[RMDB]
RNA sequence: GGGAACGACUCGAGUAGAGUCGAAAAUUCUGCUGGCGCUAAAACGCGGCAGUGGCCCUGCCGGGCUUUCGGCUAUGGCGGAAGUCUCGGAGUUUGCCGGAACGCGGCUUAUUCGCCCGUUGCUCGCCUACCGCAGUGUAUUCGUACACUGCGGUAGAAAAGAAACAACAACAACAAC
Reactivity to DMS in 0.01 (KOAc 150mM, MgCl2 10mM, bicine 150mM(pH8.5), 24C), signal-to-noise 2, nucleotides 027 to 126: u000u000c020u000g020c000u000g000g020c010g020c070u010a060a040a120a230c070g010c010g010g000c000a000g010u010g000g010c040c070c020u000g000c020c030g000g000g000c030u000u000u000c010g030g000c030u010a090u010g020g010c010g010g010a030a020g010u010c010u010c010g010g000a120g000u000u010u000g030c070c070g000g000a080a050c050g010c110g000g000c020u010u010a110u020u010c220g000c040c010c010g000u000u000g010c030u000c180g010c130